[RMDB]
RNA sequence: GGGAACGACUCGAGUAGAGUCGAAAAGGAGCCCCCGUGACGCUGGCAGCAUCGCGGACUGGGAGAAGAGAGGCGAAGAAAAGAAGGGGAGUCCCCGAUCGAAUGUCCAUAGGCAGAGAAACCUCUGAAGGGCGGUUGUUCGCAACCGCCAAAAGAAACAACAACAACAAC
Reactivity to 2A3 in 0.01 (KOAc 150mM, MgCl2 10mM, bicine 150mM(pH8.5), 24C), signal-to-noise 1, nucleotides 027 to 129: g030g000a010g000c000c000c050c000c000g110u090g040a040c020g010c030u040g080g050c000a000g000c020a010u080c000g010c040g120g000a020c030u090g020g020g010a140g000a100a000g050a000g010a010g000g000c030g020a000a040g020a010a020a050a020g110a000a000g000g000g000g000a010g060u020c000c000c020c000g000a000u090c060g070a040a050u100g020u030c020c050a020u030a040g020g000c000a010g010a010g000a080a040a030c000c000u000c000u050g040a040a000g050
Reactivity to DMS in 0.01 (KOAc 150mM, MgCl2 10mM, bicine 150mM(pH8.5), 24C), signal-to-noise 3, nucleotides 027 to 129: g060g060a130g000c000c030c090c020c090g040u030g010a060c250g030c020u030g010g000c160a040g010c000a100u030c020g050c070g030g010a160c100u040g070g000g000a180g070a050a000g000a100g020a040g020g070c170g020a050a110g000a090a040a080a060g010a050a050g000g040g000g030a060g030u000c110c020c020c010g030a090u080c080g000a080a110u010g020u120c030c110a140u010a100g000g000c030a050g000a070g000a060a090a150c000c000u000c020u040g000a070a050g000